[RMDB]
RNA sequence: GGGAACGACUCGAGUAGAGUCGAAAAUCGCAAAACCGCGGCAAGUGGAGUUAGCCAGAGGAGGCUGGGUUUUGGCUUCCUUAAGCAAUCGGUCACCGAGAAGGUGUGGUCGUUACCGUGAAAUUCCGUGACAAAAUAACGUUCGCGUUAUUUUGAAGCCCUUCCAUACAUUCGUGUAUGGAAGGGCAAAAGAAACAACAACAACAAC
Reactivity to 2A3 in 0.01 (KOAc 150mM, MgCl2 10mM, bicine 150mM(pH8.5), 24C), signal-to-noise 1, nucleotides 027 to 156: u080c000g000c010a070a070a040a060c090c070g000c070g060g050c080a090a130g010u040g080g040a050g040u130u120a030g060c000c000a000g000a010g070g070a030g000g020c060u010g070g040g050u010u070u180u240g030g000c000u000u030c010c000u000u030a100a000g010c000a030a080u110c000g020g020u060c000a000c010c040g100a040g130a160a050g060g050u130g000u020g050g000u010c000g070u040u080a080c020c040g000u050g120a050a050a050u160u070c070c060g030u060g030a020c000a040a000a000a000u000a000a020c010g000u010u040c210g000c020g170u030u010a000u070u000u010u000g080a000a000

Chemical mapping of a 207-nucleotide RNA with 2A3. The RNA was probed in 150 mM KOAc, 10 mM MgCl2 and 150 mM bicine (pH 8.5) at 24 C. The data come from the RNA Mapping Database (RMDB), library M2RFPK. Values cover nucleotides 27 to 156. The 2A3 profile rests on 479 reads.